[RMDB]
The record gives the reactivity of an RNA of 207 nucleotides to 2A3. Values cover nucleotides 27 to 156. The 2A3 profile rests on 1,069 reads.
RNA sequence: GGGAACGACUCGAGUAGAGUCGAAAACUUAUCCGGUUUUAACGCGGUUUUAUUGGCGCAAAGGUUUACGGAUAAACAACUAAUAAUUAAACCUUUUGUGUGCGAAACGUGGUUGUUUAACGUACUCACUGCCCCCAGGGAUUCGUCCCUGGGGGAAGAGGUACUGCAGAUUCGUCUGCAGUACCUCAAAAGAAACAACAACAACAAC
Reactivity to 2A3 in 0.01 (KOAc 150mM, MgCl2 10mM, bicine 150mM(pH8.5), 24C), signal-to-noise 2, nucleotides 027 to 156: c020u050u000a010u010c000c020g000g030u010u020u010u000a050a030c020g020c020g040g070u110u050u050u120a110u110u300g160g000c000g000c010a000a000a000g000g000u000u000u010a000c010g010g000a020u030a020a100a020c040a050a030c100u160a020a120u140a180a010u270u120a020a000a000c000c000u010u050u090u090g030u010g000u000g000c090g030a080a060a030c040g030u040g020g040u040u000g010u000u040u030a020a030c020g000u020a020c020u010c030a060c050u070g010c020c020c020c010c000a010g020g000g020a030u010u060c160g030u020c080c000c000u010g010g000g010g000g000a000a000